[RMDB]
RNA sequence: GGGAACGACUCGAGUAGAGUCGAAAAGAUAUGGAGCAAGAUGAGCUUGGAUUUAGGAGCCACAGUCCCAGGGUCGGAAACGACCCUGAACCUGUGGCUCCUUGUCAGCUCGCUUGCUCCUAAGUCAUCCAAUGGUUAUGUUCGCAUAACCAUUGGAAAAAGAAACAACAACAACAAC
Reactivity to 2A3 in 0.01 (KOAc 150mM, MgCl2 10mM, bicine 150mM(pH8.5), 24C), signal-to-noise 1, nucleotides 027 to 126: g000a000u100a010u280g030g000a010g010c010a000a080g240a300u230g000a050g050c120u270u260g120g040a150u300u300u170a040g000g000a000g030c030c010a000c000a020g070u070c030c030c000a000g110g050g000u030c020g020g030a120a090a080c000g000a010c020c040c030u010g010a000a000c000c020u010g010u000g000g030c000u000c000c000u020u000g000u030c020a000g010c000u020c000g000c000u010u010g020c010u020c010c010u000a010a000g010u000c000a040
Reactivity to DMS in 0.01 (KOAc 150mM, MgCl2 10mM, bicine 150mM(pH8.5), 24C), signal-to-noise 3, nucleotides 027 to 126: g010a040u010a300u010g010g010a020g020c000a020a000g000a090u000g010a000g000c000u000u000g020g010a030u010u010u000a000g010g000a020g000c010c000a010c000a020g000u000c160c260c010a010g000g000g000u010c000g010g010a120a180a300c000g020a020c000c020c010u000g000a040a100c190c010u000g010u000g000g010c000u000c010c000u000u010g010u000c000a040g000c010u000c000g010c000u000u000g000c000u000c000c000u000a020a060g000u000c050a220